[RMDB]
RNA sequence: GGGAACGACUCGAGUAGAGUCGAAAAGAUCAAGCAGGAGCUCAUCUGCAAGUGGAUCGAGCCGGAGCAGCUGGCGAAUCCCAAGAAGUCGUGCAACAAGACUUUCAGCACGAUGCACGAGCUCGUGGGCUUACGAUUGGUUCGCCAAUCGUAGGCCAAAAGAAACAACAACAACAAC
Reactivity to DMS in 0.01 (KOAc 150mM, MgCl2 10mM, bicine 150mM(pH8.5), 24C), signal-to-noise 9, nucleotides 027 to 126: g000a100u020c060a090a140g020c040a050g010g010a050g000c020u010c030a130u020c110u010g000c030a110a120g010u030g010g010a010u000c070g010a220g010c020c000g000g010a300g020c190a140g020c000u020g000g020c000g000a140a060u000c000c000c010a140a080g000a070a100g000u000c000g000u000g000c030a100a150c300a100a130g020a090c170u010u010u030c130a170g000c000a010c060g000a020u000g010c030a060c160g000a020g000c010u010c010g010u010g020
Reactivity to 2A3 in 0.01 (KOAc 150mM, MgCl2 10mM, bicine 150mM(pH8.5), 24C), signal-to-noise 9, nucleotides 027 to 126: g050a050u100c080a060a030g060c020a030g050g090a030g010c010u010c020a130u090c050u050g010c060a060a050g160u200g130g000a020u040c060g020a010g000c000c000g020g010a090g120c130a040g070c040u040g010g000c020g020a030a040u010c000c010c000a010a000g070a020a000g000u010c000g010u020g030c030a080a070c040a160a120g140a200c000u020u030u050c060a010g000c000a000c010g020a010u050g020c040a030c080g000a010g010c020u010c030g100u120g050
Chemical mapping of a 177-nucleotide RNA with DMS and 2A3. The DMS profile rests on 26,414 reads. The reactions ran in a buffer of 150 mM KOAc, 10 mM MgCl2 and 150 mM bicine (pH 8.5), at 24 C. The 2A3 profile rests on 33,087 reads.